RNA sequence: GGGAACGACUCGAGUAGAGUCGAAAAUAAAUCCAUCAGAGGCGUAAAAGCUUCGAUGGAGAUUCAGGCUCAGCCUUACAUGAGCCGACAAGUAAGGCAGGUGUCGAGGAAAACUCGACGCCAAAAACAUGAUAUGAUGCUUCGGCAUCAUAUCAUGAAAAGAAACAACAACAACAAC
Reactivity to DMS in 0.01 (KOAc 150mM, MgCl2 10mM, bicine 150mM(pH8.5), 24C), signal-to-noise 4, nucleotides 027 to 126: u040a070a040a100u000c000c000a010u000c000a090g060a010g000g000c000g000u010a120a100a110a280g000c000u000u000c000g000a030u000g010g000a000g010a090u020u000c110a060g000g000c030u000c060a090g000c030c020u000u000a010c010a110u010g000a080g000c030c030g000a080c150a080a050g010u010a000a010g020g000c300a110g020g010u000g020u000c010g000a020g000g010a080a090a120a150c000u000c010g000a000c010g020c010c010a000a020a090a090a110
Reactivity to 2A3 in 0.01 (KOAc 150mM, MgCl2 10mM, bicine 150mM(pH8.5), 24C), signal-to-noise 3, nucleotides 027 to 126: u080a010a040a030u010c000c010a010u000c030a120g010a010g000g000c010g070u150a050a080a070a100g000c000u000u010c010g000a000u000g020g000a000g040a000u100u140c100a060g000g030c000u030c070a020g010c000c000u030u040a020c030a110u150g030a020g050c030c020g010a030c050a000a080g030u030a020a030g010g040c070a030g000g000u000g000u000c000g000a010g010g080a100a160a150a120c000u000c010g000a000c000g000c000c010a040a000a000a000a000